[RMDB]
RNA sequence: GGGAACGACUCGAGUAGAGUCGAAAAGAAAGAAGCCUUUGAUGACAUGAUGGUUUCAGAACUGGCACACAUCGUUGUUGCCAGAGCUAUGUUGAUAUUGCUCAUGAACUAGGACGGUCUGAGGCAAGUUGUCUCCCGUUUUCGAACGGGAGACAACAAAAGAAACAACAACAACAAC
Reactivity to 2A3 in 0.01 (KOAc 150mM, MgCl2 10mM, bicine 150mM(pH8.5), 24C), signal-to-noise 2, nucleotides 027 to 126: g190a040a100a000g110a070a030g000c040c050u080u000u140g110a110u180g070a000c000a050u150g000a050u070g020g040u040u190u060c000a000g040a030a020c000u000g000g000c000a000c000a000c000a180u270c150g240u300u000g050u170u180g000c000c030a000g020a000g010c000u020a020u210g150u220u070g200a130u110a040u280u100g000c040u000c130a110u250g000a050a000c000u040a040g110g070a040c010g000g000u000c000u060g000a000g000g000c020a080a150
Reactivity to DMS in 0.01 (KOAc 150mM, MgCl2 10mM, bicine 150mM(pH8.5), 24C), signal-to-noise 1, nucleotides 027 to 126: g010a040a140a110g010a040a100g030c020c010u000u000u000g000a080u010g010a060c020a020u000g000a240u000g000g000u000u000u000c050a050g020a060a090c070u030g000g020c000a000c000a010c000a210u000c300g000u000u000g000u060u050g000c000c000a000g000a040g000c050u010a050u000g010u000u050g000a090u000a050u030u000g000c000u000c050a120u010g000a000a000c030u000a120g020g060a190c180g000g030u030c020u000g000a040g000g020c000a090a070